[RMDB]
RNA sequence: GGGAACGACUCGAGUAGAGUCGAAAAGUGGAGAUGCCAUGCCGACCCGAAGAGGAAAGAAGGACGCGAGACGGUGAACCUGUGAGUGGAAGCCCGCUUUAUUCACUGGGGUCGACAGCUCUGGGGAACAGCCAAGUGUUCGCACUUGGCAAAAGAAACAACAACAACAAC
Reactivity to 2A3 in 0.01 (KOAc 150mM, MgCl2 10mM, bicine 150mM(pH8.5), 24C), signal-to-noise 8, nucleotides 027 to 129: g070u080g010g040a060g000a090u110g060c040c050a040u140g020c000c020g030a050c020c000c020g010a040a020g020a020g030g000a050a020a010g050a020a000g040g020a010c030g000c020g010a070g020a020c040g020g010u050g040a040a040c000c010u070g030u060g090a040g020u050g000g020a040a020g010c000c000c000g050c030u080u090u090a140u080u080c060a050c120u060g020g020g000g000u040c010g040a020c030a030g020c010u010c010u030g030g000g000g020a030a020c010a020
Reactivity to DMS in 0.01 (KOAc 150mM, MgCl2 10mM, bicine 150mM(pH8.5), 24C), signal-to-noise 8, nucleotides 027 to 129: g040u030g020g020a010g010a090u030g000c040c040a080u060g020c040c030g010a060c030c040c050g030a040a040g020a100g030g020a040a040a050g030a040a080g040g020a080c060g040c110g010a110g030a100c090g010g050u040g000a050a090c020c010u020g020u020g020a040g020u030g000g060a170a100g000c050c030c100g000c120u060u040u040a090u050u030c090a090c090u000g020g010g000g010u000c040g020a010c140a090g010c040u030c010u020g010g040g020g000a060a040c150a110